[RMDB]
RNA sequence: GGGAACGACUCGAGUAGAGUCGAAAAAGCUCGCUGCUACGGCAGCGAGCAAGUAUGUUUGUCCACGGUAGGCCCCGGAAACUUAUUGUAUUCAAACUACGAAAGUGACGCAUUACGAUGCGUCACAUCAAUGGGUAGCGUUCGCGCUACCCAUUGAAAAAGAAACAACAACAACAAC
Reactivity to DMS in 0.01 (KOAc 150mM, MgCl2 10mM, bicine 150mM(pH8.5), 24C), signal-to-noise 1, nucleotides 027 to 126: a050g010c000u000c000g050c060u000g000c030u000a080c230g000g020c000a000g070c000g000a000g040c000a000a000g010u000a030u000g000u000u000u000g000u030c020c080a050c060g070g030u000a150g000g040c040c000c000c030g010g010a040a080a100c010u040u000a130u000u000g000u010a060u000u030c100a000a050a020c080u000a090c140g000a030a060a030g020u000g000a000c020g020c000a060u000u000a070c270g000a060u000g000c010g010u030c000a000c000a010
Reactivity to 2A3 in 0.01 (KOAc 150mM, MgCl2 10mM, bicine 150mM(pH8.5), 24C), signal-to-noise 1, nucleotides 027 to 126: a010g000c000u010c000g100c000u000g000c000u000a090c300g020g030c000a000g000c000g060a000g000c020a000a000g000u030a010u180g110u000u000u000g080u000c000c020a060c030g000g010u040a040g040g000c000c000c000c110g120g060a040a030a020c050u070u100a110u090u100g000u020a040u110u010c050a120a180a030c040u000a120c110g170a210a060a000g040u000g000a000c000g000c000a000u000u110a110c260g090a020u000g020c000g000u000c010a000c000a010